An RNA of 177 nucleotides, treated with DMS and 2A3 and read out base by base. For DMS, 18,216 sequencing reads were counted. Reactivities are given for positions 27 through 126. The 2A3 profile rests on 37,164 reads. Conditions: 150 mM KOAc, 10 mM MgCl2 and 150 mM bicine (pH 8.5), 24 C.

[RMDB]
RNA sequence: GGGAACGACUCGAGUAGAGUCGAAAAGAUAUGGAUCCCACUAAGCUUUGAUCUACCAUUCGGAAACGAAUGUGUAGGGAGCUUAUUGGGAUCCUAAGUCAAAGGCUUUCCGUUCGCGGAAAGCCAACAGUACCAAUUAGUUCGCUAAUUGGUACUGAAAAGAAACAACAACAACAAC
Reactivity to DMS in 0.01 (KOAc 150mM, MgCl2 10mM, bicine 150mM(pH8.5), 24C), signal-to-noise 6, nucleotides 027 to 126: g000a030u000a300u010g010g000a010u000c000c000c000a010c140u000a000a010g020c000u000u010u010g000a050u010c000u010a000c000c000a020u000u000c000g020g000a090a060a160c000g020a010a010u000g010u020g030u000a020g000g000g000a010g030c000u000u000a000u000u000g000g010g000a000u000c000c000u000a000a070g010u000c020a130a150a140g010g010c000u000u000u000c000c000g010u000u000c280g020c020g000g010a010a000a010g020c000c000a010a020
Reactivity to 2A3 in 0.01 (KOAc 150mM, MgCl2 10mM, bicine 150mM(pH8.5), 24C), signal-to-noise 7, nucleotides 027 to 126: g020a010u050a030u110g000g000a000u000c000c000c000a000c020u010a010a000g020c010u300u300u160g060a050u090c000u000a000c010c000a000u010u000c010g000g060a070a060a040c010g000a010a010u030g090u130g000u050a000g000g000g000a010g000c000u000u000a010u000u010g000g030g000a000u010c000c000u000a000a000g000u000c020a060a110a100g020g000c000u010u000u000c010c010g030u030u100c300g000c020g140g000a000a000a000g000c010c000a010a000